[RMDB]
RNA sequence: GGGAACGACUCGAGUAGAGUCGAAAAUUUACGGUAUUCGUACCGUAAACGAGCAAGCAAGCAGCGCAACGAGACAAGACGAUAAUAACAUCGAGCAUGCUGAUAGUAGGAUCUUCGGAUCCUACAAAUGUCCGUCUACAUUCGUGUAGACGGACAUAAAAGAAACAACAACAACAAC
Reactivity to DMS in 0.01 (KOAc 150mM, MgCl2 10mM, bicine 150mM(pH8.5), 24C), signal-to-noise 2, nucleotides 027 to 126: u000u000u000a000c000g000g000u000a000u000u000c230g010u020a050c010c010g000u000a010a000a050c190g000a060g010c110a070a090g020c100a080a060g010c000a020g020c050g030c010a040a090c040g000a090g000a090c070a050a060g020a130c050g000a050u010a110a090u000a070a100c070a070u000c030g000a160g000c070a050u010g000c030u020g000a010u000a080g000u000a000g000g000a000u000c000u000u000c100g000g010a000u000c000c010u000a000c000a030a080
Reactivity to 2A3 in 0.01 (KOAc 150mM, MgCl2 10mM, bicine 150mM(pH8.5), 24C), signal-to-noise 1, nucleotides 027 to 126: u000u000u000a010c000g000g000u000a000u020u040c170g010u030a030c000c010g010u010a000a000a000c020g030a010g120c030a060a060g040c010a030a020g060c030a040g020c020g010c060a050a090c060g030a010g020a070c020a160a000g040a020c040g030a010u050a160a020u120a160a040c060a060u000c030g000a010g020c070a050u060g000c030u050g020a060u050a110g000u000a010g000g000a000u000c000u010u020c120g060g000a000u020c010c000u000a000c000a000a000